The record gives the reactivity of an RNA of 177 nucleotides to 2A3 and DMS.
The 2A3 profile rests on 15,731 reads.
The DMS profile rests on 7,004 reads.
The RNA was probed in 150 mM KOAc, 10 mM MgCl2 and 150 mM bicine (pH 8.5) at 24 C.
Reactivities are given for positions 27 through 126.
[RMDB]
RNA sequence: GGGAACGACUCGAGUAGAGUCGAAAAUCUACAUAGUUCGCUAUGUAGAAAAACGCGCACGCGCGCGCACGCGCUCACUCUCGGACACGCACGCGCACGCAAAAACGUUGCGGUUCGCCGCAACGAACUAAGAAAGACAGUUCGCUGUCUUUCUUAGAAAAGAAACAACAACAACAAC
Reactivity to 2A3 in 0.01 (KOAc 150mM, MgCl2 10mM, bicine 150mM(pH8.5), 24C), signal-to-noise 5, nucleotides 027 to 126: u000c000u000a000c000a010u010a010g020u030u050c180g030c110u010a000u000g000u010a000g010a020a000a000a000a000c070g020c010g010c020a020c110g030c000g020c000g010c000g010c020a020c080g060c020g030c020u030c040a100c030u130c010u060c080g090g010a050c040a010c170g010c010a010c030g000c000g020c010a010c010g020c020a020a040a020a030a040c010g010u000u010g010c000g020g060u020u040c240g020c060c000g000c000a000a000c000g000a010a010
Reactivity to DMS in 0.01 (KOAc 150mM, MgCl2 10mM, bicine 150mM(pH8.5), 24C), signal-to-noise 6, nucleotides 027 to 126: u000c000u010a010c010a000u000a000g010u010u010c220g030c010u000a000u000g010u000a000g010a010a050a040a100a080c140g020c070g020c080a070c100g020c030g020c020g030c010g030c120a070c050g000c050g000c130u000c100a110c180u010c090u000c090g010g000a080c100a050c030g010c020a090c040g010c010g000c020a060c040g000c060a060a030a050a060a120c020g000u000u000g000c000g010g000u010u010c220g020c000c000g010c000a000a000c010g000a040a090